[RMDB]
RNA sequence: GGGAACGACUCGAGUAGAGUCGAAAAGAUGGGUCCGAUGGAUUAAUGCGUCGCCUGCCAUUGGAUCCUGAUUGAUAGAUUGAGGGCGACGGUCGGAUCACUCGGUAAUUCGGUGCUCGACGAGUGAUCCGUGAUGAUAGUUAAGAGGAGCACCUAAAAUUACUCGCAGUUUCGACUGCGAGUAAUUAAAAGAAACAACAACAACAAC
Reactivity to 2A3 in 0.01 (KOAc 150mM, MgCl2 10mM, bicine 150mM(pH8.5), 24C), signal-to-noise 2, nucleotides 027 to 156: g110a000u120g000g010g010u000c000c000g000a010u000g000g030a050u030u250a260a060u280g090c010g000u040c020g000c010c010u010g000c000c000a000u000u000g000g000a000u000c000c000u000g010a020u030u100g030a050u070a110g120a120u000u150g080a130g010g000g010c000g000a000c000g000g010u000c020g000g000a000u000c000a000c000u000c020g060g000u130a090a130u190u080c090g000g000u000g010c000u000c000g010a000c000g020a000g010u000g000a000u010c010c000g000u030g010a010u010g000a010u010a200g210u210u230a160a040g010a050g120g000a000g000c000a000c000c000u010a020a020
An RNA of 207 nucleotides, treated with 2A3 and read out base by base. For 2A3, 834 sequencing reads were counted. Source: RMDB library OK3TST, as collected in RNAgym. High 2A3 reactivity points to a flexible backbone, as in loops and unpaired stretches. Conditions: 150 mM KOAc, 10 mM MgCl2 and 150 mM bicine (pH 8.5), 24 C. Reactivities are given for positions 27 through 156.